Structure probing data (2A3 and DMS) for a 177-nucleotide construct. The reactions ran in a buffer of 150 mM KOAc, 10 mM MgCl2 and 150 mM bicine (pH 8.5), at 24 C. For DMS the reverse transcriptase was MarathonRT. 2A3 adducts were read by reverse transcription with SuperScript II with manganese. Values cover nucleotides 27 to 126.

RNA sequence: GGGAACGACUCGAGUAGAGUCGAAAAGCCGUAGAAGCGGAAGACUCCGCCUGCCUGAAAGCAGCGCUGGAUGCGGGUCAUCCGGUUGAUCUGCCGCGCGUAGGGCUAUUUGCUGAAGGCGUAGCGACGAGUAUGGACCAUUCGUGGUCCAUACUCGAAAAGAAACAACAACAACAAC
Reactivity to 2A3 in 0.01 (KOAc 150mM, MgCl2 10mM, bicine 150mM(pH8.5), 24C), signal-to-noise 2, nucleotides 027 to 126: g020c020c010g010u040a090g030a300a010g060c030g000g030a040a020g100a100c040u000c020c000g000c030c040u040g010c000c010u090g090a270a080a010g060c000a000g000c020g020c070u070g000g070a110u070g010c080g140g080g000u060c000a050u000c000c060g000g060u000u110g060a090u050c020u040g000c000c050g100c010g010c040g110u060a080g000g080g000c020u080a240u080u140u130g030c020u050g010a130a070g050g010c010g030u030a010g020c030g060a100
Reactivity to DMS in 0.01 (KOAc 150mM, MgCl2 10mM, bicine 150mM(pH8.5), 24C), signal-to-noise 2, nucleotides 027 to 126: g000c000c030g020u000a130g000a130a120g020c000g010g010a060a090g020a100c050u010c060c030g000c020c040u000g000c010c010u000g010a150a160a130g010c010a030g000c130g000c010u000g020g010a030u000g010c030g030g000g020u040c030a040u000c000c030g000g000u010u000g010a070u000c040u000g000c020c020g000c040g020c110g020u000a120g020g010g020c010u000a100u000u010u000g030c020u000g010a200a060g000g010c010g010u000a060g010c020g020a220